The record gives the reactivity of an RNA of 207 nucleotides to DMS and 2A3. Values cover nucleotides 27 to 156. For DMS, 4,048 sequencing reads were counted. The RNA was probed in 150 mM KOAc, 10 mM MgCl2 and 150 mM bicine (pH 8.5) at 24 C. As a SHAPE reagent, 2A3 marks flexible, mostly unpaired nucleotides at the ribose 2'-OH.
RNA sequence: GGGAACGACUCGAGUAGAGUCGAAAAGAAACAACUGAAGCUUCAACGCCUUCUUUUCCAAUCUUCUUUAGCACCGGGCUAGGGAGUAAGCCCGUGGAACCUUAGUUUUGUUCCCUUGGGACUUACUUGUGGUUCCUGUGGUGCACUCCUGACCCUGACUCAUAUACAUGUUCGCAUGUAUAUGAGUAAAAGAAACAACAACAACAAC
Reactivity to DMS in 0.01 (KOAc 150mM, MgCl2 10mM, bicine 150mM(pH8.5), 24C), signal-to-noise 2, nucleotides 027 to 156: g000a110a060a100c000a060a180c100u000g010a070a110g000c070u000u000c120a110a150c070g020c090c030u000u000c020u000u000u000u000c040c080a150a200u010c060u010u010c030u000u000u000a120g020c040a110c060c070g030g010g000c010u000a120g070g020g030a060g040u000a040a260g010c000c000c000g040u020g030g000a020a020c000c020u000u010a060g020u000u000u000u000g010u000u000c000c030c150u020u010g030g030g030a060c010u000u000a010c020u000u000g000u010g020g020u010u000c000c030u010g020u020g040g000u010g060c220a070c040u000c010c000u000g010a140c100c000c000u000g000
Reactivity to 2A3 in 0.01 (KOAc 150mM, MgCl2 10mM, bicine 150mM(pH8.5), 24C), signal-to-noise 8, nucleotides 027 to 156: g050a000a070a010c060a020a030c070u090g050a050a020g040c030u210u210c170a130a050c110g030c020c010u010u030c000u050u080u050u030c040c030a080a210u070c070u130u040c020u050u140u110a090g040c070a060c090c020g010g010g000c030u100a080g030g050g000a010g000u060a070a020g000c000c010c000g030u030g000g000a000a000c000c000u030u010a010g030u040u100u070u200g050u080u040c010c030c040u150u210g040g000g010a010c000u010u010a000c000u030u050g080u130g090g010u000u010c010c000u040g160u250g000g020u070g000c030a000c010u010c000c000u050g060a110c000c000c000u010g030
About this RNA: 2A3 adducts were read by reverse transcription with SuperScript II with manganese. Source: RMDB library VIROID, as collected in RNAgym.